[RMDB]
RNA sequence: GGGAACGACUCGAGUAGAGUCGAAAAGCCGAGGGAUGCCAGGCCGGCACUGUCGAGGGCGUGGCCGAACAGAGGUUCGCAGCGCUGGCCGGGAAAGGCCGGCUUGAUCACCAGGUCGGGCAGUGCAGCUACCGACCCAUUUCGAUGGGUCGGUAGCAAAAGAAACAACAACAACAAC
Reactivity to 2A3 in 0.01 (KOAc 150mM, MgCl2 10mM, bicine 150mM(pH8.5), 24C), signal-to-noise 1, nucleotides 027 to 126: g070c030c010g000a160g120g020g000a070u090g120c060c010a030g040g000c100c000g040g000c000a030c070u070g040u120c050g060a180g170g040g000c040g060u040g060g000c140c010g020a030a000c000a040g300a160g300g000u040u020c040g000c050a070g020c030g000c030u000g090g060c040c000g040g010g060a210a210a010g020g080c010c000g000g000c000u030u010g010a030u060c000a020c160c030a020g010g070u040c040g040g020g030c010a060g000u030g000c000a000
Reactivity to DMS in 0.01 (KOAc 150mM, MgCl2 10mM, bicine 150mM(pH8.5), 24C), signal-to-noise 2, nucleotides 027 to 126: g010c020c040g020a160g000g010g000a070u010g050c220c000a020g010g000c040c020g010g000c000a020c020u010g000u010c020g020a120g010g010g020c030g010u000g010g070c150c040g010a030a030c010a290g020a120g010g010u010u000c010g010c040a300g010c060g040c000u010g000g020c030c000g010g000g000a030a090a060g020g030c000c000g020g010c010u000u010g020a060u000c080a070c090c020a090g020g000u000c070g010g010g000c070a080g010u010g010c130a150